[RMDB]
RNA sequence: GGGAACGACUCGAGUAGAGUCGAAAAAUCACCUUUGCGAAAUGCUGCCGCCCUAUUCCUGGCGACCCGAUUAUCGCCCACGUCAGCCCCGGUAAAGGUCUGGUGAUCCACCAUGAAUCCUGCCGUAAUACUCGACGUGAUUCGUCACGUCGAGUAUAAAAGAAACAACAACAACAAC
Reactivity to 2A3 in 0.01 (KOAc 150mM, MgCl2 10mM, bicine 150mM(pH8.5), 24C), signal-to-noise 1, nucleotides 027 to 126: a020u100c050a070c010c000u080u040u120g060c050g040a080a150a110u100g020c050u030g000c060c000g030c000c000c000u080a110u020u070c020c040u050g000g000c010g050a040c000c000c070g040a040u110u020a080u090c060g040c000c010c010a030c020g060u040c040a030g000c010c010c040c010g060g000u100a160a150a000g000g000u010c000u000g040g000u010g080a300u140c090c000a000c010c010a050u190g030a050a010u030c000c010u010g030c010c000g000u030a050
Reactivity to DMS in 0.01 (KOAc 150mM, MgCl2 10mM, bicine 150mM(pH8.5), 24C), signal-to-noise 1, nucleotides 027 to 126: a100u010c020a090c040c010u000u010u010g010c060g010a070a100a060u000g020c000u000g000c060c030g010c010c010c040u000a160u010u000c040c000u010g020g020c060g000a060c140c060c050g010a150u010u030a120u000c060g000c000c030c060a040c090g020u010c030a100g010c000c050c020c040g010g000u000a000a070a040g010g000u000c020u000g010g000u020g020a070u000c110c050a040c030c010a030u010g000a020a050u000c010c000u000g020c050c030g010u010a080